[RMDB]
RNA sequence: GGGAACGACUCGAGUAGAGUCGAAAAUGAAACACUUUAAGAGUAUCCAUGUCAUCUGCAGAUAAUUGUAGAUUAGCAUCUGCAUUAACACCUAUCUCUGGAACAUAGAAUACAUUACCACCUUUCUUUUGCCUCUUUGUAUCUAAAGAAAAAGAACGGUAGAAGUGAGGUUCGCCUCACUUCUACCAAAAGAAACAACAACAACAAC
Reactivity to 2A3 in 0.01 (KOAc 150mM, MgCl2 10mM, bicine 150mM(pH8.5), 24C), signal-to-noise 2, nucleotides 027 to 156: u110g030a020a110a010c030a010c050u100u200u180a090a040g030a000g030u010a040u020c060c040a000u020g020u100c050a080u000c090u060g010c030a000g070a100u100a160a050u260u060g050u180a030g020a080u030u050a020g010c010a010u000c000u020g000c000a020u000u110a080a000c050a080c030c050u030a050u080c030u000c010u050g010g040a050a020c050a040u070a040g100a050a030u090a110c050a070u040u080a020c050c040a050c010c020u010u140u100c050u040u150u120u030g030c000c030u050c000u020u040u080g080u040a090u070c060u070a060a090a050g100a060a050a060a000a000g210a050a020c090